[RMDB]
RNA sequence: GGGAACGACUCGAGUAGAGUCGAAAAGAUAUGGAGACUCGCGUGCAAGGAUGGUCGGAAACGAUUCAUCUGAUGACCACGAAACGUCUCCUAAGUCAAAACAGCCCUUCGUUCGCGAAGGGCUGAAUCUAUAAGCCAAGUUCGCUUGGCUUAUAGAAAAAGAAACAACAACAACAAC
Reactivity to 2A3 in 0.01 (KOAc 150mM, MgCl2 10mM, bicine 150mM(pH8.5), 24C), signal-to-noise 3, nucleotides 027 to 126: g020a010u050a020u110g010g000a010g000a010c030u050c120g170c030g060u060g020c070a220a140g010g000a000u000g000g000u000c000g020g050a020a030a020c020g020a020u300u300c000a010u030c010u040g090a200u230g080a090c090c020a010c010g000a100a160a010c110g010u010c010u000c000c000u000a060a000g020u030c030a000a030a110a200c010a000g010c000c000c030u000u000c040g040u020u080c300g000c000g130a000a000g010g000g000c000u000g000a000a000
Reactivity to DMS in 0.01 (KOAc 150mM, MgCl2 10mM, bicine 150mM(pH8.5), 24C), signal-to-noise 5, nucleotides 027 to 126: g000a030u000a300u000g000g000a020g010a010c010u010c210g020c000g000u000g000c030a130a230g000g000a000u000g010g000u010c000g000g000a080a090a150c000g000a010u000u010c000a000u010c000u010g000a070u010g010a160c300c000a010c010g000a030a120a080c220g010u000c000u000c000c000u000a010a040g010u010c030a080a090a110a200c000a020g000c010c000c000u000u000c000g040u010u010c220g020c040g010a020a010g000g020g020c000u000g000a010a040